[RMDB]
RNA sequence: GGGAACGACUCGAGUAGAGUCGAAAACCCUCCAAAAAUGACCGGGGAGGGCGCUUAGAACGCGGGGGAGCAGUAGGGUCCGUGGGAUGCUCCUCCCGAUUCCGUCCAUCCCCUCCCCCAGAAGGUCCCUAUGUACAUUCUUCGGAAUGUACAUAGGAAAAGAAACAACAACAACAAC
Reactivity to DMS in 0.01 (KOAc 150mM, MgCl2 10mM, bicine 150mM(pH8.5), 24C), signal-to-noise 2, nucleotides 027 to 126: c000c000c010u020c070c070a020a060a110a110a060u010g000a050c120c140g010g020g000g030a070g000g000g010c060g000c300u020u000a110g020a010a030c040g000c100g010g020g000g000g000a030g000c000a020g010u010a150g030g010g010u000c050c030g020u010g020g020g000a130u000g000c020u000c000c000u000c000c000c000g000a160u010u000c130c020g000u000c000c010a130u010c040c010c000c020u010c010c000c010c010c090a100g010a060a130g030g000u010c090
Reactivity to 2A3 in 0.01 (KOAc 150mM, MgCl2 10mM, bicine 150mM(pH8.5), 24C), signal-to-noise 3, nucleotides 027 to 126: c020c010c000u080c070c020a060a090a070a060a160u150g030a070c100c000g010g000g000g000a000g010g010g000c020g020c010u110u140a040g020a060a000c020g020c120g040g000g020g000g010a000g000c020a010g020u250a080g110g070g070u050c020c030g090u130g070g060g000a030u030g000c010u000c010c000u040c010c000c000g130a160u060u000c020c010g040u010c010c000a200u050c000c000c000c010u020c010c010c000c010c010a040g040a070a030g050g020u020c000